Structure probing data (2A3 and DMS) for a 177-nucleotide construct. For DMS the reverse transcriptase was MarathonRT. The 2A3 profile rests on 863 reads. The reactions ran in a buffer of 150 mM KOAc, 10 mM MgCl2 and 150 mM bicine (pH 8.5), at 24 C. Reactivities are given for positions 27 through 126. The data come from the RNA Mapping Database (RMDB), library VIROID.
[RMDB]
RNA sequence: GGGAACGACUCGAGUAGAGUCGAAAAUCCAUCCCUCCCCCCCGAGGGUCGCCCAGGAAUGGCGGAACCCCACUUCGCUGGGGUUCGCGUUCCAUCCUUUCUUACCUGAUGGCCGGCAUGGUCCCAGCAUCUAAGACAACUUCGGUUGUCUUAGAUGAAAAGAAACAACAACAACAAC
Reactivity to 2A3 in 0.01 (KOAc 150mM, MgCl2 10mM, bicine 150mM(pH8.5), 24C), signal-to-noise 1, nucleotides 027 to 126: u040c000c010a030u040c010c020c000u000c010c000c000c000c000c000c000g000a050g010g020g020u070c030g000c000c000c000a000g030g070a080a020u050g300g280c040g100g020a000a020c010c000c040c000a020c000u300u280c180g230c250u030g000g000g020g000u020u000c010g040c000g000u100u030c020c000a040u090c020c000u060u110u020c040u050u030a120c000c020u050g060a070u130g070g040c000c000g090g050c130a140u090g000g000u070c000c020c000a050g000
Reactivity to DMS in 0.01 (KOAc 150mM, MgCl2 10mM, bicine 150mM(pH8.5), 24C), signal-to-noise 2, nucleotides 027 to 126: u020c030c040a120u000c030c010c000u000c000c010c010c020c000c000c000g020a070g000g010g010u010c020g020c020c020c050a060g010g010a050a020u000g010g030c010g010g010a010a010c010c000c010c000a010c030u000u020c240g010c230u000g000g010g010g000u010u000c010g000c010g010u000u010c000c010a090u010c070c050u000u010u000c050u000u010a100c090c040u020g000a080u000g010g000c030c020g010g000c090a060u000g010g010u010c000c080c020a110g010